[RMDB]
RNA sequence: GGGAACGACUCGAGUAGAGUCGAAAAGGUGGCCGGGGCCCGGAGGCAGCUGCCGGUGACGGAGGGCAUUGUGGAGGUGCGCUACAAGGAUGGCUGGGCACAGAUCUGCGACGAGGGCUGGGACAGCUACAUAACGUAAAUUCGUUUACGUUAUGUAAAAAGAAACAACAACAACAAC
Reactivity to DMS in 0.01 (KOAc 150mM, MgCl2 10mM, bicine 150mM(pH8.5), 24C), signal-to-noise 9, nucleotides 027 to 126: g010g020u000g010g010c040c030g010g000g010g020c060c030c040g010g010a110g010g010c070a090g010c060u000g010c020c020g010g010u000g010a110c090g010g000a110g010g010g010c060a080u000u010g020u000g000g000a100g010g010u000g010c060g000c050u000a060c120a080a100g010g010a100u010g010g010c040u010g000g000g010c050a060c080a070g000a080u000c050u000g010c060g010a080c110g000a110g000g000g000c050u000g010g000g000a090c090a050g000c100
Reactivity to 2A3 in 0.01 (KOAc 150mM, MgCl2 10mM, bicine 150mM(pH8.5), 24C), signal-to-noise 6, nucleotides 027 to 126: g050g010u040g020g010c040c020g020g010g050g020c000c040c020g040g010a060g040g000c020a020g030c020u080g030c010c010g020g040u050g030a030c030g030g020a050g030g020g010c030a030u040u150g040u040g030g040a050g000g040u060g030c070g010c030u070a050c040a100a050g100g010a070u090g050g000c050u030g020g030g000c030a020c010a060g050a070u020c020u080g020c020g030a040c030g030a090g010g030g000c020u030g010g000g020a020c020a020g000c020